Chemical mapping of a 177-nucleotide RNA with DMS and 2A3. It was measured as part of the RMDB libraries RFM100 and RFMREP. The reactions ran in a buffer of 150 mM KOAc, 10 mM MgCl2 and 150 mM bicine (pH 8.5), at 24 C.

RNA sequence: GGGAACGACUCGAGUAGAGUCGAAAAACGGCUAGGUCUACGGACCUAGCCGAAACUGAGAUCCCUGUUAUUAGGUCCAGAUCACAUUUUGAGACAUCAAUGGGAGGAUUAAUUCCUCCUAAUCCAACGAAUAGUCAAUGUUCGCAUUGACUAUUCGAAAAGAAACAACAACAACAAC
Reactivity to DMS in 0.01 (KOAc 150mM, MgCl2 10mM, bicine 150mM(pH8.5), 24C), signal-to-noise 4, nucleotides 027 to 126: a110c000g020g000c000u000a010g000g020u000c000u000a140c200g040g000a000c000c010u000a000g020c010c010g010a000a010a060c090u000g010a160g000a170u000c010c000c000u020g010u020u020a090u040u020a090g000g010u000c010c010a050g010a040u010c210a160c230a120u040u000u020u010g010a120g020a020c060a100u010c130a050a100u000g000g000g000a010g000g010a020u010u040a070a190u030u000c000c000u010c000c000u000a010a030u010c060c100a060a220
Reactivity to 2A3 in 0.01 (KOAc 150mM, MgCl2 10mM, bicine 150mM(pH8.5), 24C), signal-to-noise 5, nucleotides 027 to 126: a000c000g000g020c000u010a010g010g010u020c010u010a040c300g040g010a000c000c010u010a000g000c010c000g010a000a000a000c020u050g040a010g010a020u050c000c000c000u000g110u110u090a300u100u180a080g050g010u000c010c020a020g030a070u100c100a050c060a230u070u100u070u110g140a160g000a050c050a080u120c100a100a100u140g000g010g010a010g010g000a000u090u170a120a130u300u000c000c000u000c000c010u010a010a010u000c020c020a050a040